[RMDB]
RNA sequence: GGGAACGACUCGAGUAGAGUCGAAAAUGAAACCCGGUCCGAAGCAGGGGGGACCACCCUCCAAGCCUGAAUACUCUCCUGUGACCGAUAGCGCACAAGUACCGUGAGGGAAAGGUGAAAAGCACCCAAUUUUUUGCGUAUUCGUACGCAAAAAAUUAAAAGAAACAACAACAACAAC
Reactivity to 2A3 in 0.01 (KOAc 150mM, MgCl2 10mM, bicine 150mM(pH8.5), 24C), signal-to-noise 2, nucleotides 027 to 126: u190g010a060a040a020c020c010c020g010g000u060c040c040g070a080a000g040c080a070g000g000g010g010g010g000a110c000c020a090c010c020c000u000c000c000a030a050g020c010c020u030g050a020a020u100a080c010u020c010u020c010c000u020g030u070g060a040c000c020g060a040u050a050g040c070g020c000a100c020a110a020g050u060a030c000c040g050u080g040a080g050g010g000a070a030a030g040g020u040g030a040a010a050a040g040c010a050c010c020c000
Reactivity to DMS in 0.01 (KOAc 150mM, MgCl2 10mM, bicine 150mM(pH8.5), 24C), signal-to-noise 3, nucleotides 027 to 126: u020g010a070a050a110c070c000c010g000g020u010c030c200g010a070a170g060c040a120g000g040g000g000g000g000a100c180c230a070c070c030c000u000c020c040a090a130g000c040c050u020g020a110a100u010a050c030u000c050u000c000c000u000g000u010g030a110c040c020g010a090u020a090g010c060g000c020a010c000a050a000g000u010a050c020c000g010u070g000a140g000g010g010a110a090a060g000g010u030g000a030a060a070a060g010c040a130c010c010c060